Structure probing data (2A3) for a 177-nucleotide construct. Source: RMDB library OK1LIB, as collected in RNAgym.
RNA sequence: GGGAACGACUCGAGUAGAGUCGAAAAGACCGCCGCGGCACGGUGGACGAUGGCGAUCACUCCCGCGGCAUCGGCGGCGCCGCAGGCAUCGAGAUGGGUAUGCGCGUCGAUCAACGGUGCCAGGGGCGGUGGUGACCUGCUUCGGCAGGUCACCACCAAAAGAAACAACAACAACAAC
Reactivity to 2A3 in 0.01 (KOAc 150mM, MgCl2 10mM, bicine 150mM(pH8.5), 24C), signal-to-noise 1, nucleotides 027 to 126: g050a030c000c030g010c000c030g050c010g000g020c030a060c170g030g000u090g060g000a000c000g130a190u170g070g030c090g030a080u040c020a010c090u000c010c010c000g000c130g020g000c000a020u070c050g000g000c000g010g000c000g000c020c140g000c000a020g120g000c000a090u150c080g100a110g000a170u240g110g000g130u110a100u110g000c050g000c000g000u020c000g000a050u150c000a000a030c010g090g000u000g000c010c010a060g000g010g020g080c070